[RMDB]
RNA sequence: GGGAACGACUCGAGUAGAGUCGAAAAAUCUAAUUCUGCAUCAUGGUUUAUUUAUGUAGUCUCGCUUUUGGACAAAACUAACCCACAGAUCUUUUAUUAUCCUUGUGCUUGUGGCAUUAUCCCCUGUGAUGAGUGCGUUAUUCGUAACGCACUCAUCAAAAGAAACAACAACAACAAC
Reactivity to 2A3 in 0.01 (KOAc 150mM, MgCl2 10mM, bicine 150mM(pH8.5), 24C), signal-to-noise 4, nucleotides 027 to 126: a000u060c050u040a030a040u100u050c040u060g060c010a060u020c000a040u050g110g040u150u110u170a130u060u160u030a030u050g070u020a020g020u010c040u030c090g070c070u060u030u110u170g040g010a020c010a020a100a000a000c030u020a010a060c010c000c000a020c000a020g080a080u050c020u030u170u020u040a180u090u080a030u150c020c010u050u090g050u040g020c030u060u060g020u060g080g000c010a010u010u020a040u050c000c000c000c000u010g080u050
Notes:
This 177-nucleotide RNA was probed chemically with 2A3. The data come from the RNA Mapping Database (RMDB), libraries RFM100 and RFMREP. The RNA was probed in 150 mM KOAc, 10 mM MgCl2 and 150 mM bicine (pH 8.5) at 24 C. 2A3 adducts were read by reverse transcription with SuperScript II with manganese.